[RMDB]
RNA sequence: GGGAACGACUCGAGUAGAGUCGAAAAACGUACGUCGGCGUACGGAAACCAUCCUUACGAGCACAAGACCGUACGGAAACCAUCCAUGAGACACGUAUUCAGGACUUGGAAGCAUUAUGUGCUGCAUGCGAAAGGAUGGUCGUGGAUUACGUGGAUGGAUCUAACGUCUUUUCGAAGACGUUAGAUCAAAAGAAACAACAACAACAAC
Reactivity to 2A3 in 0.01 (KOAc 150mM, MgCl2 10mM, bicine 150mM(pH8.5), 24C), signal-to-noise 7, nucleotides 027 to 156: a000c040g020u080a010c030g010u020c060g150g070c020g010u010a010c010g030g000a070a030a010c050c020a030u020c000c010u040u060a050c050g060a050g050c040a040c030a230a000g030a070c030c030g020u030a000c000g040g000a080a010a020c030c010a020u030c010c010a070u110g040a020g030a090c030a010c070g030u050a050u100u100c040a030g040g070a060c020u040u080g040g070a140a010g020c010a030u070u120a130u300g090u060g020c030u040g000c020a060u110g030c050g120a100a020a030g030g000a020u020g000g020u000c000g070u040g030g030a150u100u050a070c030g010u040g030g020a030u050g060
Reactivity to DMS in 0.01 (KOAc 150mM, MgCl2 10mM, bicine 150mM(pH8.5), 24C), signal-to-noise 2, nucleotides 027 to 156: a050c020g020u010a050c020g030u000c120g030g020c040g020u000a020c060g070g010a080a090a120c090c060a070u000c000c010u000u000a070c090g000a240g000c090a160c080a090a150g000a090c010c020g000u000a030c040g030g020a060a100a080c000c020a090u000c030c050a070u020g020a130g010a120c080a040c000g010u000a060u000u000c080a140g000g000a100c010u000u010g000g000a150a050g000c020a030u000u020a110u020g030u010g000c030u000g000c080a120u000g010c070g000a120a060a070g000g010a050u000g020g000u000c000g020u010g000g010a150u010u000a040c060g060u000g020g000a110u000g010
Source information: The data come from the RNA Mapping Database (RMDB), library OK3TST. The record gives the reactivity of an RNA of 207 nucleotides to 2A3 and DMS. The reactions ran in a buffer of 150 mM KOAc, 10 mM MgCl2 and 150 mM bicine (pH 8.5), at 24 C. The 2A3 profile rests on 5,843 reads. For DMS, 4,558 sequencing reads were counted. For DMS the reverse transcriptase was MarathonRT.